[RMDB]
RNA sequence: GGGAACGACUCGAGUAGAGUCGAAAAGGCUGGGGAGAUUGCAGAAUAUCGUGAUGAGCAUCGAGCACCAAUGGAAAUCACGCUCGUGGAGGGGCUUGAUGAAGUAUUCCCUGGGAAUGACACGGAACUGCAAGGGGCGCUUAGAGAGCGGCUAGAACAUUCUUCGGUUAUUCGUAACCGAAGAAUGAAAAGAAACAACAACAACAAC
Reactivity to 2A3 in 0.01 (KOAc 150mM, MgCl2 10mM, bicine 150mM(pH8.5), 24C), signal-to-noise 2, nucleotides 027 to 156: g060g020c160u090g010g000g100g010a050g090a070u120u090g000c010a020g080a210a060u140a130u200c030g030u060g080a190u100g060a070g070c010a010u040c010g000a030g000c050a040c040c010a020a110u150g050g040a130a100a000u140c030a060c100g040c100u100c060g000u070g010g030a070g020g020g030g000c000u000u000g000a020u030g030a040a020g000u030a110u080u080c030c020c030u020g040g000g020a050a050u090g000a020c000a000c040g030g060a070a030c000u020g000c020a010a020g050g000g010g030c070g000c070u070u100a020g010a000g000a010g130c040g010g030c040u090a070g050a080a000
This 207-nucleotide RNA was probed chemically with 2A3. The reactions ran in a buffer of 150 mM KOAc, 10 mM MgCl2 and 150 mM bicine (pH 8.5), at 24 C. For 2A3 the reverse transcriptase was SuperScript II with manganese.